[RMDB]
This 177-nucleotide RNA was probed chemically with DMS and 2A3. 2A3 adducts were read by reverse transcription with SuperScript II with manganese. DMS adducts were read by reverse transcription with MarathonRT. The DMS profile rests on 26,442 reads.

RNA sequence: GGGAACGACUCGAGUAGAGUCGAAAAGCCUAACAGUUCGCUGUUAGGCAAAUCCACAGACUUCGCAACUGUGAAAAACACAACAGAAGUGUCUAUGCGAGGAUCGUUGCGUCUUCGGACGCAACAAGUUAAGAAGAACAUUCGUGUUCUUCUUAACAAAAGAAACAACAACAACAAC
Reactivity to DMS in 0.01 (KOAc 150mM, MgCl2 10mM, bicine 150mM(pH8.5), 24C), signal-to-noise 9, nucleotides 027 to 126: g010c000c000u000a000a000c000a000g020u000u010c250g030c010u000g010u000u000a000g010g010c000a000a030a070u010c010c000a110c100a070g010a100c030u000u000c010g010c020a060a190c090u000g000u010g000a050a070a080a110a060c030a030c040a090a130c210a120g000a120a100g010u000g000u000c090u000a100u010g010c020g000a030g000g000a120u010c120g000u000u000g000c010g010u000c000u000u010c180g010g010a010c010g010c000a000a000c010a050a070
Reactivity to 2A3 in 0.01 (KOAc 150mM, MgCl2 10mM, bicine 150mM(pH8.5), 24C), signal-to-noise 9, nucleotides 027 to 126: g000c000c000u000a000a000c000a000g050u080u100c160g050c110u010g000u000u000a000g000g000c000a010a020a000u010c000c000a030c010a050g060a040c010u020u010c010g000c030a090a100c100u050g010u090g180a140a020a010a050a000c040a020c030a140a110c050a120g170a300a050g170u030g040u050c060u110a080u050g010c010g010a010g020g040a110u120c100g000u000u000g000c000g000u000c000u020u040c190g100g000a000c000g000c000a000a000c010a000a000